[RMDB]
The data come from the RNA Mapping Database (RMDB), library OK2TRN. This 177-nucleotide RNA was probed chemically with DMS and 2A3. DMS (dimethyl sulfate) methylates the pairing face of unpaired adenines and cytosines. For 2A3 the reverse transcriptase was SuperScript II with manganese. Conditions: 150 mM KOAc, 10 mM MgCl2 and 150 mM bicine (pH 8.5), 24 C.

RNA sequence: GGGAACGACUCGAGUAGAGUCGAAAACAGCAGAGGAGUCUUUUACAUGCUUCUUGAUUGGUCACAAUGACUACUCUGUGCCAGUCAUCAGAAAAACAUAUUUGCCUUUUUGGCGACACAAGGGGUCAAUCUGACCAAGUUUCGACUUGGUCAGAUUAAAAGAAACAACAACAACAAC
Reactivity to DMS in 0.01 (KOAc 150mM, MgCl2 10mM, bicine 150mM(pH8.5), 24C), signal-to-noise 3, nucleotides 027 to 126: c090a110g010c030a050g020a060g010g020a030g010u010c020u000u000u010u020a110c230a080u000g000c020u000u000c110u010u000g010a070u020u010g000g000u010c100a040c070a030a130u010g000a030c030u000a060c050u000c010u000g020u000g000c010c000a040g000u000c010a080u000c200a080g000a040a010a040a090a080c140a110u010a120u000u010u000g020c030c010u000u000u010u020u010g020g010c020g000a050c180a030c090a060a040g000g000g000g010u000c090
Reactivity to 2A3 in 0.01 (KOAc 150mM, MgCl2 10mM, bicine 150mM(pH8.5), 24C), signal-to-noise 3, nucleotides 027 to 126: c020a000g000c010a020g000a010g110g010a010g020u000c010u080u270u070u160a140c110a120u080g030c000u100u070c030u100u100g050a090u020u030g020g010u210c050a010c040a040a060u150g020a030c010u050a070c010u010c020u020g000u020g010c000c000a000g030u000c000a060u060c030a040g170a110a130a020a010a020c080a020u220a110u080u150u130g040c000c010u110u220u100u170u300g020g010c020g050a000c010a000c010a080a040g000g000g080g000u100c030